Annotation
Structure probing data (2A3 and DMS) for a 177-nucleotide construct. The 2A3 profile rests on 1,967 reads. Conditions: 150 mM KOAc, 10 mM MgCl2 and 150 mM bicine (pH 8.5), 24 C.
RNA sequence: GGGAACGACUCGAGUAGAGUCGAAAAAGGAACCACCUCCUCUCAGACACAGGCCUUCCACUCCUUAUCCACCUCCUCCUCCUGAAAGUAAUGAAAGUGAGGAGGAUUAAGGGAUUAGUGCUGUAGCUAUGCUUCUGAACUUCGGUUCAGAAGCAUAAAAAGAAACAACAACAACAAC
Reactivity to 2A3 in 0.01 (KOAc 150mM, MgCl2 10mM, bicine 150mM(pH8.5), 24C), signal-to-noise 3, nucleotides 027 to 126: a010g100g000a020a010c000c000a030c000c010u000c000c000u000c010u000c010a010g020a040c010a000c020a070g040g000c000c000u070u070c020c010a060c070u040c000c000u000u020a010u010c000c000a050c000c040u050c010c010u000c010c000u010c000c010u040g080a170a090a070g120u170a020a160u170g100a200a170a010g140u230g070a000g010g010a000g010g000a000u000u040a000a010g000g000g000a000u000u100a030g040u040g040c080u060g020u060a040g010c030
Reactivity to DMS in 0.01 (KOAc 150mM, MgCl2 10mM, bicine 150mM(pH8.5), 24C), signal-to-noise 2, nucleotides 027 to 126: a080g040g000a090a100c050c000a090c040c000u000c040c000u030c000u000c040a050g000a070c060a110c080a140g000g020c040c000u020u010c000c040a100c110u000c070c030u010u030a020u000c030c030a050c040c090u010c000c000u000c000c010u000c020c030u000g010a140a240a080g020u070a100a100u080g000a080a290a010g000u020g000a020g000g000a000g000g080a000u000u010a070a000g000g000g000a040u030u000a050g030u020g050c030u020g000u000a100g010c110
Overview:
2A3 adducts were read by reverse transcription with SuperScript II with manganese. As a SHAPE reagent, 2A3 marks flexible, mostly unpaired nucleotides at the ribose 2'-OH.